[RMDB]
RNA sequence: GGGAACGACUCGAGUAGAGUCGAAAAGCGGCAACCGUUCCGGCGGUCGAUCGGGUGGCGGGAACCGGCGCGGCGGCGGCAACCGUCAACAGGCAAACGAUCCGUGGUCGAACUCGCCCGCGAGCGAGCUUAUAAUCACGUUCGCGUGAUUAUAAGCAAAAGAAACAACAACAACAAC
Reactivity to 2A3 in 0.01 (KOAc 150mM, MgCl2 10mM, bicine 150mM(pH8.5), 24C), signal-to-noise 4, nucleotides 027 to 126: g040c040g030g020c030a050a050c030c020g030u040u030c020c010g030g000c010g000g040u030c020g020a050u020c010g040g040g050u050g020g010c010g000g010g010a020a040c030c000g070g000c030g000c020g070g030c040g030g000c010g000g020c020a020a040c010c000g020u020c010a040a060c020a070g070g000c040a160a120a050c070g020a050u020c020c010g050u070g030g020u040c010g010a060a050c030u030c130g020c040c050c010g060c040g010a020g010c010g010a020
Reactivity to DMS in 0.01 (KOAc 150mM, MgCl2 10mM, bicine 150mM(pH8.5), 24C), signal-to-noise 6, nucleotides 027 to 126: g020c030g010g010c030a090a090c080c030g020u000u000c060c050g010g010c050g010g010u000c030g000a060u000c030g010g000g020u000g010g000c020g010g000g000a170a120c070c010g000g020c090g020c050g020g000c050g020g010c010g010g010c040a040a230c040c020g010u000c040a080a080c090a130g000g010c120a050a090a160c100g010a040u000c030c030g000u000g010g010u000c030g010a050a100c050u010c020g010c050c000c060g010c090g000a070g000c030g010a120
Source information:
This 177-nucleotide RNA was probed chemically with 2A3 and DMS. 2A3 adducts were read by reverse transcription with SuperScript II with manganese. For DMS the reverse transcriptase was MarathonRT. Reactivities are rounded to 0.1 and cut off at 0 and 3. Source: RMDB library OK2TRN, as collected in RNAgym. The RNA was probed in 150 mM KOAc, 10 mM MgCl2 and 150 mM bicine (pH 8.5) at 24 C.